RNA sequence: GGGAACGACUCGAGUAGAGUCGAAAAUCCUAAGUCACUCCCGGGAGUUUCGCGACGACGCAUACUGGAGCGUCGGAAACGACGCGAUGAAAGUAUGCAUCAGCGAAACAGGGAGUGAUAUGGAAAACAGUUUGUUUACUUCGGUAAACAAACUGAACCUACCACAUAACUUCGGUUAUGUGGUAGGAAAAGAAACAACAACAACAAC
Reactivity to DMS in 0.01 (KOAc 150mM, MgCl2 10mM, bicine 150mM(pH8.5), 24C), signal-to-noise 1, nucleotides 027 to 156: u000c010c010u000a050a130g020u000c000a010c010u020c010c000c020g010g000g050a220g020u000u020u000c000g030c000g010a180c150g030a010c040g030c000a060u000a070c020u000g000g000a150g040c000g010u000c000g000g010a080a150a300c070g050a020c000g000c000g010a140u010g000a150a070a040g000u020a010u000g000c000a030u000c010a170g010c000g000a010a010a020c010a050g000g000g010a060g020u010g010a000u000a080u000g010g020a160a090a030a230c020a000g000u010u000u000g010u000u000u030a020c000u000u000c240g070g040u040a010a020a010c010a000a000a000c000u000g010a020a080
Reactivity to 2A3 in 0.01 (KOAc 150mM, MgCl2 10mM, bicine 150mM(pH8.5), 24C), signal-to-noise 3, nucleotides 027 to 156: u020c000c010u010a080a020g030u000c000a010c010u010c000c000c000g010g060g100a220g010u010u000u000c010g000c020g080a240c110g000a000c020g030c020a000u000a000c000u010g000g030a000g000c000g000u000c010g000g020a050a050a000c020g000a000c000g030c000g070a100u050g000a020a000a010g010u010a000u000g020c000a000u000c010a000g000c000g000a000a000a000c000a000g000g000g000a000g000u010g000a000u000a000u010g050g030a030a030a000a080c000a010g000u010u000u000g000u010u010u000a020c010u040u100c280g110g000u000a000a000a000c000a000a000a000c000u000g000a000a010